[RMDB]
RNA sequence: GGGAACGACUCGAGUAGAGUCGAAAAAUCGUCUCCAUCCCGGAAGGUGAUAUGCGAAUCAUUGAGCCGAAACGCCGUCCGCUGAUUGGUCGCCCCUGGGCUUUGGGUGCUUAUGAUUGCUAUGGCCUUAUUAUGGAUUUUCAUAAGCGCCACGGCGUGGUAACAUCGAGUUCGCUCGAUGUUACCAAAAAGAAACAACAACAACAAC
Reactivity to 2A3 in 0.01 (KOAc 150mM, MgCl2 10mM, bicine 150mM(pH8.5), 24C), signal-to-noise 2, nucleotides 027 to 156: a000u050c040g050u020c010u000c020c010a100u030c020c030c000g010g070a080a060g070g000u010g020a060u050a050u270g090c030g070a070a090u160c040a100u140u210g070a020g000c030c030g040a040a060a030c080g000c020c020g000u010c030c030g020c080u060g060a100u020u150g100g000u050c010g020c020c000c000c030u060g080g050g040c000u130u190u090g040g000g000u010g000c000u000u040a000u020g010a020u010u070g030c120u150a120u220g120g050c000c010u170u200a250u160u120a110u240g000g050a030u120u000u000u000c010a000u000a000a000g000c000g020c000c000a020c020g030g000c010g000
Reactivity to DMS in 0.01 (KOAc 150mM, MgCl2 10mM, bicine 150mM(pH8.5), 24C), signal-to-noise 1, nucleotides 027 to 156: a100u000c000g010u000c010u020c000c030a110u010c040c050c030g020g020a060a110g010g020u010g010a190u000a050u000g000c090g000a110a100u000c060a150u000u000g010a220g060c000c030g000a090a070a090c050g030c000c010g000u010c030c020g070c060u010g000a090u010u000g040g000u010c020g000c040c000c010c060u040g020g030g000c120u010u010u010g000g000g040u000g000c020u050u000a020u000g000a080u010u000g000c000u000a010u010g020g020c080c070u010u000a140u020u010a070u010g010g000a240u000u000u000u020c030a000u000a030a020g000c050g010c000c020a030c040g020g000c000g050